Chemical mapping of a 177-nucleotide RNA with 2A3 and DMS.
Source: RMDB libraries RFM100 and RFMREP, as collected in RNAgym.
2A3 adducts were read by reverse transcription with SuperScript II with manganese.
Values cover nucleotides 27 to 126.
RNA sequence: GGGAACGACUCGAGUAGAGUCGAAAACAAAAGCUGUUACGUGCUUGUAACACACUACACACUCGUUUUGUAUUCGAGAAGUAGUUGCAACAACGGUCCCCUUAUUGCCUGACAAGCUGAGGGCCACGGAGAGUGACGUAUUCGUACGUCACUCUCCAAAAGAAACAACAACAACAAC
Reactivity to 2A3 in 0.01 (KOAc 150mM, MgCl2 10mM, bicine 150mM(pH8.5), 24C), signal-to-noise 7, nucleotides 027 to 126: c030a020a090a010a010g040c090u010g010u010u010a010c020g050u090g090c070u090u120g010u020a010a000c010a000c000a000c000u000a000c040a000c000a040c010u000c050g030u020u040u120u250g260u120a200u070u080c010g000a000g020a100a000g000u000a000g000u000u060g000c030a060a070c030a030a030c070g020g090u160c030c010c000c000u060u090a090u190u290g000c000c010u050g040a060c030a080a020g000c020u030g020a020g000g010g000c000c010a060c070
Reactivity to DMS in 0.01 (KOAc 150mM, MgCl2 10mM, bicine 150mM(pH8.5), 24C), signal-to-noise 2, nucleotides 027 to 126: c110a060a000a000a020g020c110u000g010u000u000a000c120g010u060g010c010u020u000g000u010a000a000c020a000c000a010c000u000a000c000a120c240a160c010u000c000g000u020u000u080u010g020u000a060u010u000c000g000a000g050a300a020g000u000a000g000u010u010g010c080a300a130c210a110a060c140g010g000u020c070c000c000c020u000u040a060u040u030g000c010c000u010g040a130c240a130a240g010c040u030g000a040g000g000g000c020c010a030c200